[RMDB]
RNA sequence: GGGAACGACUCGAGUAGAGUCGAAAAGAUAUGGACCUGUUGUCAGAAGGAGUAUGUGAGCAUCGAUCAGAGCUCGGAAACGAGCUCUGGGAGCUCAUGAAACUUCUUGGAUUUACAGGUCCUAAGUCAAACGUUAUACGAUUCGUCGUAUAACGAAACGUUUAGAUAGUUUCGACUAUCUAAACGUAAAAGAAACAACAACAACAAC
Reactivity to 2A3 in 0.01 (KOAc 150mM, MgCl2 10mM, bicine 150mM(pH8.5), 24C), signal-to-noise 6, nucleotides 027 to 156: g030a020u070a040u130g000g000a010c000c010u000g020u010u020g010u020c010a010g060a090a010g020g020a010g010u040a040u300g010u060g000a000g000c060a290u220c040g110a080u080c030a010g000a000g000c000u010c010g000g010a040a070a030c010g000a000g000c000u010c010u000g000g000g000a000g000c000u000c010a000u030g020a020a030a010c000u000u000c000u010u070g040g010a030u230u200u170a000c000a000g000g000u000c000c000u000a010a010g030u010c020a080a000a060c010g000u000u000a000u000a000c000g000a010u010u090c250g050u010c000g000u150a000u000a000a000c000g000a030a050
Reactivity to DMS in 0.01 (KOAc 150mM, MgCl2 10mM, bicine 150mM(pH8.5), 24C), signal-to-noise 2, nucleotides 027 to 156: g030a110u010a240u000g010g020a000c010c000u000g030u010u000g010u000c020a080g020a060a030g050g020a130g010u000a110u000g030u020g010a020g020c000a170u010c200g000a130u000c010a030g010a020g010c000u000c000g000g010a110a110a300c020g000a030g010c000u030c000u010g000g010g010a030g040c010u000c010a020u000g010a190a140a140c000u000u000c010u000u000g000g020a040u000u010u000a040c030a010g000g010u000c010c000u000a020a050g000u010c050a040a040a210c010g010u000u010a010u000a010c000g010a070u000u010c300g020u000c010g020u010a000u000a000a000c000g000a030a050